[RMDB]
RNA sequence: GGGAACGACUCGAGUAGAGUCGAAAAGCAGGAAACUCUUGAAUACAAGACAUAAUUUAAAACUUGAGCGAAUGCAAACUCAUAAAUUCUUAGAACAAGGAAUGUACUACAUUUGCUGGCAACGGCGGGUAAUGUGGGUAUUCGUACCCACAUUACCAAAAGAAACAACAACAACAAC
Reactivity to DMS in 0.01 (KOAc 150mM, MgCl2 10mM, bicine 150mM(pH8.5), 24C), signal-to-noise 1, nucleotides 027 to 126: g030c050a010g000g000a150a150a220c030u000c000u000u020g030a060a220u000a170c280a030a040g000a140c080a120u000a020a080u030u000u000a070a070a110a100c060u020u000g000a000g020c020g000a200a110u020g000c060a040a120a090c060u000c120a000u000a080a030a030u000u000c000u000u000a090g020a030a120c110a020a050g010g060a000a030u000g020u000a050c140u000a050c080a020u020u000u000g000c070u000g000g000c160a080a050c120g030g020c080g000
Reactivity to 2A3 in 0.01 (KOAc 150mM, MgCl2 10mM, bicine 150mM(pH8.5), 24C), signal-to-noise 1, nucleotides 027 to 126: g000c010a010g050g000a020a020a020c020u000c000u020u030g040a080a020u170a060c060a040a130g110a060c050a190u290a150a130u260u210u200a000a060a050a030c010u050u010g030a020g020c010g010a040a000u050g010c000a010a030a030c010u030c060a000u140a110a150a000u120u040c030u060u120a170g050a140a090c050a020a070g000g030a020a010u030g000u080a090c030u050a040c030a060u060u000u190g030c010u000g010g000c010a000a120c060g000g030c040g020
Structure probing data (DMS and 2A3) for a 177-nucleotide construct. The reactions ran in a buffer of 150 mM KOAc, 10 mM MgCl2 and 150 mM bicine (pH 8.5), at 24 C. It was measured as part of the RMDB library OK2TST.